[RMDB]
RNA sequence: GGGAACGACUCGAGUAGAGUCGAAAAGGAUGGGCAAUUACUGGAUUACGCCCAUGGCCGCAGCGGCGUAGUGCAUCUGGUUUGGCCAAACUCGAUGCGUGCAGGAGUGGAAAGCAAACUGACGUUACGGAUUUAAUCAUUUCGAUGAUUAAAUCCGAAAAGAAACAACAACAACAAC
Reactivity to DMS in 0.01 (KOAc 150mM, MgCl2 10mM, bicine 150mM(pH8.5), 24C), signal-to-noise 6, nucleotides 027 to 126: g010g020a080u000g000g000g020c020a100a120u000u010a080c160u010g010g010a090u000u000a120c160g010c000c000c030a050u000g000g020c040c070g010c080a080g010c140g010g010c040g020u000a050g010u010g010c060a030u010c020u000g010g000u000u000u000g010g010c080c080a060a070a070c010u000c160g010a050u000g000c020g020u000g010c050a050g000g000a080g020u010g000g010a060a070a100g000c080a020a060a100c060u000g020a080c120g010u010u000a190
Reactivity to 2A3 in 0.01 (KOAc 150mM, MgCl2 10mM, bicine 150mM(pH8.5), 24C), signal-to-noise 4, nucleotides 027 to 126: g120g000a040u040g000g010g010c040a050a060u170u080a140c100u110g090g000a040u050u080a040c060g000c020c000c010a000u040g020g030c040c020g000c030a020g040c040g040g010c020g010u030a010g070u060g080c020a030u000c030u030g050g020u020u020u120g100g030c030c000a040a040a030c030u020c020g030a040u050g030c040g010u060g030c030a010g000g050a010g020u060g030g090a140a050a000g050c030a090a030a070c030u050g030a030c020g030u080u110a050
Source: RMDB library OK2TST, as collected in RNAgym. The record gives the reactivity of an RNA of 177 nucleotides to DMS and 2A3. For 2A3 the reverse transcriptase was SuperScript II with manganese.